Description: This 177-nucleotide RNA was probed chemically with 2A3. The 2A3 profile rests on 739 reads. It was measured as part of the RMDB library OK2TRN.
RNA sequence: GGGAACGACUCGAGUAGAGUCGAAAACCAUCGACAAGCGCUACGACGAGAUCGCGCCUACCGGCGCCGACGCGCUGGCCACCAUCACGCGCGAGCCGCUGGGCGUGGUGGCCGCCGUGGUGCCGUAGCGUAGGCUCCGUUUCGACGGAGCCUACGCAAAAGAAACAACAACAACAAC
Reactivity to 2A3 in 0.01 (KOAc 150mM, MgCl2 10mM, bicine 150mM(pH8.5), 24C), signal-to-noise 1, nucleotides 027 to 126: c020c000a070u070c030g050a070c030a230a100g200c070g100c160u080a020c000g280a050c060g010a050g050a180u040c040g000c020g120c040c000u080a080c070c050g040g000c000g050c000c020g270a080c010g050c010g020c010u080g020g000c000c000a010c010c000a030u140c010a010c050g140c000g050c060g110a100g130c140c030g060c080u200g050g220g090c090g050u030g000g000u000g000g010c000c000g010c030c000g000u010g010g030u010g060c000c000g020u000a010